[RMDB]
RNA sequence: GGGAACGACUCGAGUAGAGUCGAAAAGAUAUGGAACGUGUGGCAACGAUAAGAUGCACAUCGGAAACGAUGUGGCAUCUUUUGACGUUGAGCACGUUCCUAAGUCAAAGUUCAGUUCGCUGAACAAGUGCUUAUCAACCUUCGGGUUGAUAAGCACAAAAGAAACAACAACAACAAC
Reactivity to 2A3 in 0.01 (KOAc 150mM, MgCl2 10mM, bicine 150mM(pH8.5), 24C), signal-to-noise 1, nucleotides 027 to 126: g020a020u090a050u170g020g000a010a000c000g010u000g030u130g300g140c020a000a010c010g070a050u020a110a000g000a000u030g000c010a000c020a000u000c020g000g000a040a130a020c020g020a000u010g000u000g020g010c000a000u010c000u010u000u000u030g040a000c000g000u000u000g010a000g000c000a000c040g000u020u000c000c000u000a020a000g020u000c010a150a000a000g000u010u000c000a020g010u050u240c300g020c090u020g000a010a010c020a040a040
Reactivity to DMS in 0.01 (KOAc 150mM, MgCl2 10mM, bicine 150mM(pH8.5), 24C), signal-to-noise 2, nucleotides 027 to 126: g030a070u010a300u030g000g010a010a000c000g070u000g020u000g000g000c000a000a010c000g050a170u000a000a010g000a010u000g020c030a010c000a010u000c010g030g010a110a100a250c010g020a030u000g100u000g010g010c010a010u000c000u010u000u000u010g000a160c100g000u010u000g000a300g000c020a000c000g010u000u000c000c000u000a010a080g010u000c050a120a080a090g010u000u000c000a010g000u000u010c300g000c020u000g000a010a000c010a050a250